[RMDB]
RNA sequence: GGGAACGACUCGAGUAGAGUCGAAAACCCGCAACCUGCGAUUAUCGCAAGGUCAAGGCAAAGUCCGGUAAUGGCGUUCUGAAUACCAGAGAUAAUUCUCUGGCGAAACCCACCUUAAGGUGGGUUUGAACAUGGAAGACUUCGGUCUUCCAUGUUCAAAAGAAACAACAACAACAAC
Reactivity to DMS in 0.01 (KOAc 150mM, MgCl2 10mM, bicine 150mM(pH8.5), 24C), signal-to-noise 2, nucleotides 027 to 126: c030c010c000g000c030a040a020c010c010u000g020c030g020a300u060u030a080u030c030g000c000a010a010g010g000u000c050a050a140g020g010c050a100a180a170g000u040c000c000g010g010u010a020a030u000g000g000c050g020u000u000c060u010g000a130a150u030a300c000c040a000g030a000g000a020u030a110a120u010u020c010u000c000u000g000g000c180g020a020a030a010c000c000c000a040c000c000u020u070a070a070g000g010u000g000g000g000u000u000u000
Reactivity to 2A3 in 0.01 (KOAc 150mM, MgCl2 10mM, bicine 150mM(pH8.5), 24C), signal-to-noise 2, nucleotides 027 to 126: c000c000c000g020c030a010a000c000c000u040g000c040g080a130u230u080a080u300c010g000c040a060a080g000g020u020c030a050a070g000g050c100a270a260a000g060u040c000c010g000g000u000a000a000u020g120g000c030g030u220u070c090u150g080a150a030u080a130c020c020a000g000a000g010a010u040a300a300u300u020c000u000c000u000g000g020c000g000a100a000a000c010c000c000a020c010c000u250u300a160a040g050g000u000g000g000g000u000u000u000